[RMDB]
Structure probing data (DMS) for a 177-nucleotide construct. The RNA was probed in 150 mM KOAc, 10 mM MgCl2 and 150 mM bicine (pH 8.5) at 24 C. It was measured as part of the RMDB library RFM100.
RNA sequence: GGGAACGACUCGAGUAGAGUCGAAAAAGGGCGGCUGAGGGGAAGGAGGCUCUAGUACGAGAGGAACGAGCCUCCGGCGCCACUGGUUUACCGGUUGUCCGGCAGGGCAUCGCCGGGCAGCUACGCGUUGGGCAACAUGUUUCGACAUGUUGCCCAAAAAAGAAACAACAACAACAAC
Reactivity to DMS in 0.01 (KOAc 150mM, MgCl2 10mM, bicine 150mM(pH8.5), 24C), signal-to-noise 1, nucleotides 027 to 126: a090g020g020g080c020g060g010c000u000g000a140g000g000g010g030a080a040g000g000a010g000g000c000u000c000u000a080g000u000a030c050g000a270g000a180g020g000a110a070c140g000a000g000c000c000u000c000c040g000g000c070g000c100c010a020c040u010g020g010u000u000u000a090c100c000g010g000u000u030g010u000c000c000g000g010c000a080g020g030g010c120a090u020c150g040c020c010g000g000g000c010a000g060c000u000a070c100g000c140g020

Values cover nucleotides 27 to 126. DMS adducts were read by reverse transcription with MarathonRT.